Structure probing data (DMS and 2A3) for a 207-nucleotide construct. The 2A3 profile rests on 3,282 reads. 2A3 adducts were read by reverse transcription with SuperScript II with manganese. It was measured as part of the RMDB library OK3TST.
RNA sequence: GGGAACGACUCGAGUAGAGUCGAAAAAGGUGGCAUUAGGGGAAGGACACUUCCAGCAUACUGCAGAGGCAUUCUCUUCCAGCCUGGUUGCCUGUCAAGCACCUGCUGAGAUGACUGGCCCAGACGGAGAUUGUGGGGUUGCUGAGCCAGCCCUGUCCGAAGUAGUAAAAUUCGUUUUACUACUUCGAAAAGAAACAACAACAACAAC
Reactivity to DMS in 0.01 (KOAc 150mM, MgCl2 10mM, bicine 150mM(pH8.5), 24C), signal-to-noise 3, nucleotides 027 to 156: a080g020g020u000g030g040c020a100u000u000a110g030g010g020g010a110a080g030g020a110c120a070c040u000u010c040c010a100g030c050a130u010a050c090u000g000c030a120g010a090g020g010c040a120u010u000c030u000c030u010u000c040c020a100g050c010c010u000g010g020u010u000g020c020c010u000g030u000c070a070a140g030c040a060c080c050u000g000c070u020g010a180g020a160u000g000a070c020u000g000g010c030c000c020a080g000a050c030g000g010a080g000a120u000u000g030u010g010g000g010g010u000u000g000c010u010g010a140g010c000c000a050g010c050c060c010u000g010u000c020
Reactivity to 2A3 in 0.01 (KOAc 150mM, MgCl2 10mM, bicine 150mM(pH8.5), 24C), signal-to-noise 4, nucleotides 027 to 156: a000g050g010u050g020g000c040a040u090u180a090g020g010g000g060a040a050g060g030a040c050a030c070u050u000c030c010a030g040c030a070u060a140c020u090g030c050a000g010a050g100g000c010a040u110u020c030u010c000u120u060c040c030a050g030c040c030u010g000g010u090u210g000c020c010u020g030u050c040a050a010g020c010a110c140c100u150g020c020u040g040a110g030a270u110g010a040c000u020g010g000c000c000c000a000g010a010c020g030g000a030g000a050u080u110g060u110g050g020g000g000u030u030g000c030u100g030a020g020c040c000a000g000c000c000c000u040g050u020c020